[RMDB]
RNA sequence: GGGAACGACUCGAGUAGAGUCGAAAAGCGGUUCAAUAUCGACGACCGGCUGCUGUCGCUGAACGUCGUGCGUGAAGGCACCUAUCUGCUGGUGGCGACGUCAGGGGGCUAUGCGAAACGUACCGCGGGCACUGCACCCAUUCGUGGGUGCAGUGCCAAAAGAAACAACAACAACAAC
Reactivity to 2A3 in 0.01 (KOAc 150mM, MgCl2 10mM, bicine 150mM(pH8.5), 24C), signal-to-noise 1, nucleotides 027 to 126: g000c010g000g030u070u070c050a080a000u130a080u260c050g070a020c000g220a250c010c000g000g000c000u020g010c000u050g030u070c010g030c140u060g020a010a040c070g030u070c090g010u100g080c020g040u110g070a170a130g090g000c000a010c000c030u210a150u230c010u060g050c000u020g100g180u090g110g000c000g020a000c000g000u030c000a060g020g090g000g090g000c070u090a030u130g000c020g030a000a150a000c000g060u000a000c000c000g050c040g000